Chemical mapping of a 177-nucleotide RNA with 2A3 and DMS. For DMS the reverse transcriptase was MarathonRT. For 2A3, 1,829 sequencing reads were counted. For DMS, 7,490 sequencing reads were counted.
[RMDB]
RNA sequence: GGGAACGACUCGAGUAGAGUCGAAAAGUGGGGAAUAUUGCACAAUGGGCGGAAGCCUGAUGCAGCGACGCCGCGUGAGGGAUGAAGGCCUUCGGGUUGUAAUCCUCUUUCGACAGGGACGCAGCGCAAUUUUAUUUAAUUUCGAUUAAAUAAAGUUAAAAGAAACAACAACAACAAC
Reactivity to 2A3 in 0.01 (KOAc 150mM, MgCl2 10mM, bicine 150mM(pH8.5), 24C), signal-to-noise 1, nucleotides 027 to 126: g040u040g020g000g010g000a020a030u060a030u030u070g000c010a000c000a020a040u010g010g000g000c000g000g080a040a010g000c000c000u000g020a040u050g000c010a010g000c000g030a000c010g000c010c000g000c030g020u040g000a020g000g020g000a020u020g010a040a020g010g010c000c000u030u040c110g080g000g000u050u300g010u070a000a000u000c000c000u050c000u000u030u040c020g020a020c020a020g020g000g000a010c000g010c010a020g010c030g000c020
Reactivity to DMS in 0.01 (KOAc 150mM, MgCl2 10mM, bicine 150mM(pH8.5), 24C), signal-to-noise 2, nucleotides 027 to 126: g030u000g000g010g010g010a050a070u030a050u020u020g010c010a080c090a100a080u020g010g000g000c020g010g020a100a100g030c030c010u000g000a070u010g010c010a050g010c060g000a110c070g010c020c020g000c020g020u000g020a060g000g010g000a000u000g000a130a300g000g000c000c000u010u040c300g000g000g000u000u000g000u000a300a250u000c000c000u000c020u000u000u000c020g000a300c210a090g010g000g000a030c040g010c020a050g020c010g000c090